The record gives the reactivity of an RNA of 177 nucleotides to 2A3. Reactivities are given for positions 27 through 126. The RNA was probed in 150 mM KOAc, 10 mM MgCl2 and 150 mM bicine (pH 8.5) at 24 C. The 2A3 profile rests on 326 reads.

RNA sequence: GGGAACGACUCGAGUAGAGUCGAAAAAUCUUUCGAUAAGAUAACCAUAUGACUUUAUUUUUUAUCAUUUAAUGAUGAACGGUUUCUUGUCCUACUUUAUUCCAAGUGAGGAUAAAGCUCAACAUUGCCUCUGCACUGGGUUCGCCCAGUGCAGAGGAAAAGAAACAACAACAACAAC
Reactivity to 2A3 in 0.01 (KOAc 150mM, MgCl2 10mM, bicine 150mM(pH8.5), 24C), signal-to-noise 1, nucleotides 027 to 126: a000u040c040u070u140u190c000g000a000u030a100a000g000a000u250a080a070c000c000a050u000a200u260g070a070c000u000u000u230a100u170u160u190u000u020u040a100u170c000a000u000u000u300a300a160u100g000a000u000g000a050a000c100g070g000u000u000u000c000u000u020g000u000c130c000u100a000c000u030u150u250a150u230u070c090c000a150a300g000u000g210a050g040g000a000u000a000a000a000g000c000u000c090a130a150c030a300u090u240g000